[RMDB]
RNA sequence: GGGAACGACUCGAGUAGAGUCGAAAAAAGGCGCGCAUGCCCGACGGCGAGGAUCUCGUCGUGACCCAUGGCGAUGCCUGCUUGCCGAAUAUCAUGGUGGAAAAUGGCCGCUUUUCUGGAUUCAUCGACUGUGGCCGGCUGGGUGUGGCGGACCGCUAUCAGGACAUAGCGUUGGCUACCCGUGAUAUUGCUGAAGAGCUUGGCGGCGAAUGGGCUGACCGCUUCCUCGUGCUUUACGGUAUCGCCGCUCCCGAUUCGCAGCGCAUCCCACUCGCUUCGGCGAGUGGAAAAGAAACAACAACAACAAC
Reactivity to 2A3 in 0.01 (KOAc 150mM, MgCl2 10mM, bicine 150mM(pH8.5), 24C), signal-to-noise 2, nucleotides 027 to 266: a000a000g070g000c030g020c030g010c030a020u090g010c000c000c000g050a010c010g000g020c020g000a020g090g030a130u070c050u030c130g020u000c010g000u020g060a150c010c010c000a060u090g070g080c050g060a140u040g010c000c000u000g000c010u020u040g080c030c030g030a050a010u060a000u080c010a020u050g020g050u080g110g100a040a040a050a080u060g030g010c000c010g010c040u060u020u050u090c060u100g080g040a130u230u040c020a020u120c090g060a040c020u010g000u010g000g000c000c020g010g000c020u050g000g000g070u130g020u020g010g010c030g020g030a030c020c020g000c010u020a030u060c040a050g080g010a020c010a060u060a010g010c010g020u050u040g080g000c000u020a030c000c000c000g000u000g010a010u050a040u090u050g050c020u090g030a080a030g020a020g080c050u090u110g010g000c000g010g000c020g000a080a050u060g030g040g000c000u000g000a030c010c100g010c030u040u010c010c000u030c010g030u020g160c010u040u050u110a020c000g010g020u000a070u120c010g010c020c020g010c000u000c000c000c000g050a130u110u120c050g000c050a030g020c010g000c050a010u040c000
Reactivity to DMS in 0.01 (KOAc 150mM, MgCl2 10mM, bicine 150mM(pH8.5), 24C), signal-to-noise 5, nucleotides 027 to 266: a000a000g000g000c030g030c140g020c080a060u010g000c020c020c040g010a090c150g000g000c000g000a020g020g000a080u020c070u010c130g020u000c010g010u010g010a160c070c070c010a060u010g020g000c040g030a060u000g010c010c000u000g010c030u000u000g000c300c030g010a100a050u000a050u000c030a040u010g000g010u000g000g000a050a060a090a180u020g020g000c010c020g010c120u000u000u010u000c080u020g010g010a130u020u010c100a080u000c080g000a060c060u010g030u000g000g010c080c020g010g000c150u000g010g010g010u000g010u000g000g010c000g000g000a030c080c030g010c100u000a030u010c080a100g020g010a110c300a090u000a020g010c010g010u000u010g010g000c010u000a070c110c000c000g020u000g010a050u010a040u010u000g000c020u010g000a080a290g000a040g000c010u000u000g010g010c010g010g010c040g020a150a060u000g000g000g000c010u000g010a040c070c070g010c100u000u000c050c030u000c050g010u010g010c070u000u010u010a170c170g000g000u000a030u000c040g010c010c000g010c030u000c010c000c000g000a130u020u010c120g000c050a060g010c110g010c070a070u010c070